[RMDB]
RNA sequence: GGGAACGACUCGAGUAGAGUCGAAAAAAGCAGGGUGUGAGAGAAACUCUCUCCCAGCCGCUUCGCGCAGCCACCCUUUUCGACUCUACUCGGGUUAGCUGCGCGAACUGGCUGGCGUUCCCCAGAAUACAAGGGCAAAUUUCGAUUUGCCCUUGUAAAAAGAAACAACAACAACAAC
Reactivity to DMS in 0.01 (KOAc 150mM, MgCl2 10mM, bicine 150mM(pH8.5), 24C), signal-to-noise 1, nucleotides 027 to 126: a090a030g010c150a060g000g000g020u010g030u000g010a030g010a150g000a170a130a100c130u000c020u000c050u000c070c020c010a020g000c000c000g000c300u000u000c000g010c030g000c020a020g000c000c030a020c030c020c000u000u000u000u000c000g010a020c020u020c000u010a000c000u000c010g010g010g010u000u000a020g000c010u000g010c000g030c030g010a010a010c050u000g000g020c000u000g010g010c000g000u010u000c010c000c010c090a110g000a120a170